[RMDB]
RNA sequence: GGGAACGACUCGAGUAGAGUCGAAAAGAAGGUCGAGUGCACGACCAGAGAGUGCGGUGAGUGACCGACAAAGAGUUCGAAUCGGAACGAACACCCGCAGACGAUCGACUGAAGAUCGAAGUGAGAACGUAAUGAUGAGUUUCGACUCAUCAUUACGAAAAGAAACAACAACAACAAC
Reactivity to 2A3 in 0.01 (KOAc 150mM, MgCl2 10mM, bicine 150mM(pH8.5), 24C), signal-to-noise 9, nucleotides 027 to 126: g120a060a040g050g010u010c010g040a070g070u180g100c080a030c080g000a010c010c020a000g030a010g010a010g050u200g030c040g000g000u050g040a190g020u040g050a100c000c010g000a010c030a000a160a030g120a010g060u080u130c030g030a050a090u130c060g040g010a020a060c020g010a030a020c020a050c000c020c000g000c010a010g030a090c030g010a010u010c010g070a090c170u200g070a120a020g000a040u010c010g010a070a000g130u090g020a090g030a110a020
Reactivity to DMS in 0.01 (KOAc 150mM, MgCl2 10mM, bicine 150mM(pH8.5), 24C), signal-to-noise 9, nucleotides 027 to 126: g020a110a140g000g010u000c000g000a130g010u030g010c060a080c010g000a070c030c050a140g000a120g010a120g030u020g020c010g000g010u020g000a160g020u020g010a060c020c010g000a150c100a060a060a100g010a160g010u000u010c030g010a100a170u020c090g010g010a300a080c040g000a070a040c030a160c040c000c020g010c080a070g010a220c010g000a030u000c010g010a130c190u040g020a080a090g010a050u000c010g020a080a080g000u030g000a130g000a090a230